[RMDB]
RNA sequence: GGGAACGACUCGAGUAGAGUCGAAAAAAAAAAGAUAUGGACGUUACUCGCUUGGAUUUAUGGGAGAAGUAUAUCGGAAACGAUAUACGGAUCCCAUUGUCAGCGAGAAACGUCCUAAGUCAAAAAACAAGAUCCAUUAGUUCGCUAAUGGAUCUUGAAAAGAAACAACAACAACAAC
Reactivity to DMS in 0.01 (KOAc 150mM, MgCl2 10mM, bicine 150mM(pH8.5), 24C), signal-to-noise 1, nucleotides 027 to 126: a000a060a060a030a100a030g000a050u000a300u020g010g000a000c010g040u000u000a080c030u010c000g000c000u000u010g030g020a010u000u030u000a000u000g000g030g030a030g010a300a160g000u000a010u000a000u000c000g000g000a110a050a070c010g000a000u000a000u000a010c000g020g010a300u000c000c000c000a000u000u000g010u000c000a010g000c000g000a000g000a010a010a010c000g000u000c010c000u020a000a060g010u010c060a010a040a070a120a040a110
Reactivity to 2A3 in 0.01 (KOAc 150mM, MgCl2 10mM, bicine 150mM(pH8.5), 24C), signal-to-noise 1, nucleotides 027 to 126: a000a000a000a000a000a000g090a060u100a020u100g010g000a010c020g000u020u070a070c030u000c030g080c040u100u250g270g030a100u300u300u130a000u070g000g030g000a020g010a050a010g000u040a010u000a000u020c020g000g000a150a090a000c010g000a000u020a020u000a030c000g040g000a010u030c040c000c000a000u000u010g010u000c010a010g030c000g000a000g040a000a010a000c000g000u000c020c000u000a010a000g000u000c020a070a110a000a000a000a080
Conditions: 150 mM KOAc, 10 mM MgCl2 and 150 mM bicine (pH 8.5), 24 C. Structure probing data (DMS and 2A3) for a 177-nucleotide construct. The DMS profile rests on 1,358 reads. Reactivities are given for positions 27 through 126.